Structure probing data (2A3) for a 207-nucleotide construct. The 2A3 profile rests on 787 reads. It was measured as part of the RMDB library M2RFPK. Reactivities are given for positions 27 through 156.

[RMDB]
RNA sequence: GGGAACGACUCGAGUAGAGUCGAAAAUAAGCACCUCGUUAGGCGAGGCGGCUACACGAACAUAGGCCACUGACCCCGAACGUCGAGAGACGCCCCGGGUCAGGACAGCUCUUCCCGGCUUAAGGGUAAAAUCACAACGUCUUCGGACGUUGUGAAAGUAAUGUUUGCUGUUCGCAGCAAACAUUACAAAAGAAACAACAACAACAAC
Reactivity to 2A3 in 0.01 (KOAc 150mM, MgCl2 10mM, bicine 150mM(pH8.5), 24C), signal-to-noise 1, nucleotides 027 to 156: u160a010a010g020c000a030c010c000u000c000g060u090u300a150g220g000c000g010a020g000g010c070g150g000c000u040a030c070a020c210g220a190a030c050a090u260a090g120g030c040c030a050c000u000g000a020c000c010c010c070g040a060a060c000g000u000c000g010a030g000a010g010a260c000g070c000c030c050c010g000g000g000u000c000a000g010g020a010c010a000g010c000u000c000u010u030c000c010c000g000g030c010u130u110a080a060g000g000g060u030a080a040a000a120u060c000a000c010a000a000c000g000u000c000u010u080c210g060g000a000c010g000u000u020g000u000g000a000a000a000